[RMDB]
RNA sequence: GGGAACGACUCGAGUAGAGUCGAAAACAAAAAUAGUAAAGUGCAGCUCGGUGAGUACAUUUUCGAGCGCAUUGAUUAUAGUGAUGCUGUAUCCUACAAGUCUAGUACAACGUAUAAACUGACUGUAAACGUCCGCAGUUCGCUGCGGACAAAAGAAACAACAACAACAAC
Reactivity to 2A3 in 0.01 (KOAc 150mM, MgCl2 10mM, bicine 150mM(pH8.5), 24C), signal-to-noise 4, nucleotides 027 to 129: c010a000a030a000a000a010u170a020g050u080a020a100a000g000u000g000c010a000g000c060u000c000g000g020u020g050a030g050u150a100c090a140u050u040u040u020c010g000a000g000c000g000c000a000u000u050g030a010u010u140a030u000a090g100u080g040a050u000g010c100u030g010u070a110u020c010c000u000a010c000a070a060g000u030c040u180a010g040u050a030c030a100a010c170g090u090a070u050a110a030a020c020u000g010a000c000u000g000u080a110a000a000c050
Reactivity to DMS in 0.01 (KOAc 150mM, MgCl2 10mM, bicine 150mM(pH8.5), 24C), signal-to-noise 3, nucleotides 027 to 129: c060a080a070a200a110a050u060a000g010u010a050a090a000g020u000g010c010a190g030c050u020c030g000g000u040g010a100g060u170a070c230a150u000u000u000u000c020g000a020g040c000g030c040a030u010u010g000a120u000u000a050u010a170g000u000g000a150u000g010c100u040g000u080a050u030c060c060u040a010c170a100a120g050u010c010u030a090g030u020a040c150a180a060c190g000u090a080u050a020a060a160c110u040g000a010c060u080g000u070a080a100a020c200